[RMDB]
RNA sequence: GGGAACGACUCGAGUAGAGUCGAAAAUAUGGACGCGGUUGCUGGUGAAUACCCGUGUAUGGCGUUGCUGACACGGACGAGCAGUGCGAUGUCGGGCGCUGUUUCAAGUCCUAGCCUGCGCUAGAGAAGUCUGACUUGCUUUCGAGCAGGUCGGGCUAAAAGAAACAACAACAACAAC
Reactivity to DMS in 0.01 (KOAc 150mM, MgCl2 10mM, bicine 150mM(pH8.5), 24C), signal-to-noise 9, nucleotides 027 to 126: u040a070u020g000g010a090c040g020c040g010g010u020u020g010c020u000g000g000u020g000a090a090u020a090c140c020c000g010u010g010u000a070u010g000g010c020g020u010u030g010c020u010g000a050c020a040c040g000g000a100c090g000a070g010c060a050g010u010g000c010g010a090u020g010u010c090g010g010g000c030g000c010u000g000u000u010u010c040a080a110g010u010c020c000u000a050g010c010c040u010g010c080g010c010u000a040g000a110g010a100
Reactivity to 2A3 in 0.01 (KOAc 150mM, MgCl2 10mM, bicine 150mM(pH8.5), 24C), signal-to-noise 7, nucleotides 027 to 126: u160a040u040g040g030a020c010g010c010g010g010u060u130g010c010u020g000g010u050g040a030a020u070a080c000c000c010g000u020g010u010a180u040g010g000c060g040u020u180g030c010u010g000a010c010a010c030g020g020a010c020g020a010g020c040a010g010u020g030c020g110a150u090g050u120c010g020g050g000c000g000c010u000g000u010u100u030c030a040a010g010u000c000c000u000a010g000c000c030u060g010c030g000c030u030a010g010a010g020a150
Source: RMDB library OK1LIB, as collected in RNAgym.
Chemical mapping of a 177-nucleotide RNA with DMS and 2A3.
The RNA was probed in 150 mM KOAc, 10 mM MgCl2 and 150 mM bicine (pH 8.5) at 24 C.